Structure probing data (2A3) for a 177-nucleotide construct.
RNA sequence: GGGAACGACUCGAGUAGAGUCGAAAAACACCGAUUACGAUCGGUGAAGGCACGGCUAUUGCUUUGAUAUAACCAGCAACGAGCCAACGGCGGUUCGUUAAAUAGAUUUAAGACAAAGGUGUCUCAAGCUCCACGGUGACUUCGGUCACCGUGGAGCAAAAGAAACAACAACAACAAC
Reactivity to 2A3 in 0.01 (KOAc 150mM, MgCl2 10mM, bicine 150mM(pH8.5), 24C), signal-to-noise 1, nucleotides 027 to 126: a000c000a000c000c000g000a000u120u110a080c300g000a000u000c000g000g070u010g000a000a000g000g000c000a000c000g050g040c000u000a040u100u280g130c080u000u090u170g200a130u220a150u070a120a100c050c060a010g090c010a070a000c000g180a000g060c000c000a000a000c010g250g000c030g000g000u000u000c000g000u100u280a130a190a130u000a000g000a000u080u130u080a020a010g090a000c050a000a130a120g000g080u000g000u010c000u060c050a000a000